[RMDB]
RNA sequence: GGGAACGACUCGAGUAGAGUCGAAAAGAUAUGGACUGAGGGAGACUAACUAUCGGAAACGAUAGUCAGUCUUUGAUCUCAGGUCCUAAGUCAAAGUAGCCGCAUUCCUUCGGGAAUGCGGCUACAACAAAGGACAAUCGUUCGCGAUUGUCCUUUGAAAAGAAACAACAACAACAAC
Reactivity to DMS in 0.01 (KOAc 150mM, MgCl2 10mM, bicine 150mM(pH8.5), 24C), signal-to-noise 2, nucleotides 027 to 126: g000a030u000a300u000g000g010a210c000u000g000a010g020g010g000a020g000a040c000u000a020a000c000u000a000u000c000g000g010a080a070a190c000g020a030u000a000g000u000c030a000g020u010c000u000u000u020g000a060u010c010u000c000a010g020g010u000c000c000u010a050a120g010u000c040a080a120a160g000u000a010g000c000c000g000c010a020u000u000c030c000u000u020c260g040g000g000a010a020u000g020c000g000g000c010u000a000c000a030a140

Chemical mapping of a 177-nucleotide RNA with DMS. Reactivities are given for positions 27 through 126. DMS (dimethyl sulfate) methylates the pairing face of unpaired adenines and cytosines. The data come from the RNA Mapping Database (RMDB), library TTRDEL. DMS adducts were read by reverse transcription with MarathonRT. The RNA was probed in 150 mM KOAc, 10 mM MgCl2 and 150 mM bicine (pH 8.5) at 24 C.